[RMDB]
This 207-nucleotide RNA was probed chemically with 2A3 and DMS. The DMS profile rests on 6,335 reads. Source: RMDB library M2RFPK, as collected in RNAgym. DMS (dimethyl sulfate) methylates the pairing face of unpaired adenines and cytosines. Conditions: 150 mM KOAc, 10 mM MgCl2 and 150 mM bicine (pH 8.5), 24 C.

RNA sequence: GGGAACGACUCGAGUAGAGUCGAAAACGCGUCCGUCGGCGUAGCCGACAACAUGCCCAGGUAGCCCAGACCUUCAAGGCUACGGUGCGUUGCGACGCACGGUCUGAUUCUUCACAACGACGUUCACAAGAUCGGAUCACUUUCGAGUGAUCCGAAAUGGUCUACAUAAAUUCGUUUAUGUAGACCAAAAAGAAACAACAACAACAAC
Reactivity to 2A3 in 0.01 (KOAc 150mM, MgCl2 10mM, bicine 150mM(pH8.5), 24C), signal-to-noise 3, nucleotides 027 to 156: c070g030c020g030u040c130c060g000u000c030g010g050c100g140u150a050g050c010c020g000a020c010a010a000c030a100u120g030c040c010c010a040g050g010u010a030g010c020c040c080a040g000a010c020c010u040u030c050a030a000g000g000c010u010a000c020g000g000u020g010c000g000u000u100g020c130g060a010c000g000c030a000c010g000g030u000c000u020g030a100u090u080c040u160u150c080a060c030a190a070c060g100a030c040g040u100u090c060a050c010a250a020g070a190u000c000g000g000a000u000c000a000c000u070u080u060c200g060a010g000u000g000a000u000c000c000g000a010a000a000
Reactivity to DMS in 0.01 (KOAc 150mM, MgCl2 10mM, bicine 150mM(pH8.5), 24C), signal-to-noise 2, nucleotides 027 to 156: c040g010c010g010u000c030c090g030u000c000g030g050c010g040u000a100g040c020c010g000a100c050a050a070c020a110u000g030c000c050c050a100g010g040u000a050g000c020c000c140a090g010a050c030c060u000u000c100a070a260g030g000c010u010a030c000g010g010u000g000c000g020u010u000g060c110g030a070c030g000c010a030c020g000g000u000c040u000g010a190u000u000c060u010u010c070a090c090a100a090c040g010a100c030g000u030u000c020a050c040a080a120g000a220u000c000g000g020a010u000c010a000c010u000u000u010c270g000a040g030u010g020a030u000c000c000g000a000a000a040